[RMDB]
RNA sequence: GGGAACGACUCGAGUAGAGUCGAAAAUAAUGCCACUUCGGUGGCAUUAGCAGGUACGAAAGCCCAAUCAAGUACAAAAUCCCAAACAACAAGAUAGGCAAAUAAUGCAUAGCUUCGGCUAUGCAAAGAGUGGUAGACAUUUCGAUGUCUACCACUCAAAAGAAACAACAACAACAAC
Reactivity to DMS in 0.01 (KOAc 150mM, MgCl2 10mM, bicine 150mM(pH8.5), 24C), signal-to-noise 1, nucleotides 027 to 126: u000a000a000u000g040c000c000a000c000u010u030c130g030g030u060g000g020c010a000u000u000a020g000c190a040g000g040u000a060c020g000a090a100a050g000c030c000c010a060a120u000c060a060a090g060u000a020c000a090a040a110a120u020c000c000c000a030a160a090c080a020a000c080a120a040g000a030u000a000g030g020c010a100a180a100u010a060a150u000g040c000a020u000a000g000c000u000u000c270g000g000c000u000a000u000g000c000a000a010a100

An RNA of 177 nucleotides, treated with DMS and read out base by base. It was measured as part of the RMDB library M2PK50. The RNA was probed in 150 mM KOAc, 10 mM MgCl2 and 150 mM bicine (pH 8.5) at 24 C.